RNA sequence: GGGAACGACUCGAGUAGAGUCGAAAAAACUUAACUUCUCAUUAUUCGAAGUCAAGGAAUGACAAACUUGAAAUGAUUCUUCCAGUUCGAGGUUUUGAUGGUGGGCUCAGAAAUGUUAGGGUGAGUGCUCAUGCACAGUGUUCGCACUGUGCAUGAGAAAAGAAACAACAACAACAAC
Reactivity to DMS in 0.01 (KOAc 150mM, MgCl2 10mM, bicine 150mM(pH8.5), 24C), signal-to-noise 3, nucleotides 027 to 126: a060a030c040u030u010a070a040c050u000u000c030u010c110a110u020u040a100u040u020c110g000a030a010g030u000c040a040a040g000g000a050a050u040g030a120c180a080a060a030c040u020u000g010a020a050a070u000g020a080u060u020c060u000u020c030c050a040g000u000u000c040g000a060g010g000u010u000u010u020g000a050u030g000g020u020g020g010g000c070u000c030a080g000a070a070a050u030g020u000u020a010g010g010g020u010g000a020g000u000g010
Reactivity to 2A3 in 0.01 (KOAc 150mM, MgCl2 10mM, bicine 150mM(pH8.5), 24C), signal-to-noise 4, nucleotides 027 to 126: a000a000c080u120u030a070a010c020u140u030c020u000c050a090u070u150a020u070u080c040g040a040a000g020u000c040a060a030g140g020a120a090u260g010a120c060a000a020a010c030u060u110g080a050a070a090u160g050a190u210u030c030u070u010c020c010a070g010u040u010c040g050a070g070g080u090u110u090u100g030a060u060g000g070u030g000g000g010c000u020c030a030g080a030a100a040u100g040u060u050a030g030g010g050u060g000a050g030u040g000

Conditions: 150 mM KOAc, 10 mM MgCl2 and 150 mM bicine (pH 8.5), 24 C. This 177-nucleotide RNA was probed chemically with DMS and 2A3. For 2A3 the reverse transcriptase was SuperScript II with manganese. It was measured as part of the RMDB library OK1LIB. The DMS profile rests on 5,025 reads. For 2A3, 1,636 sequencing reads were counted.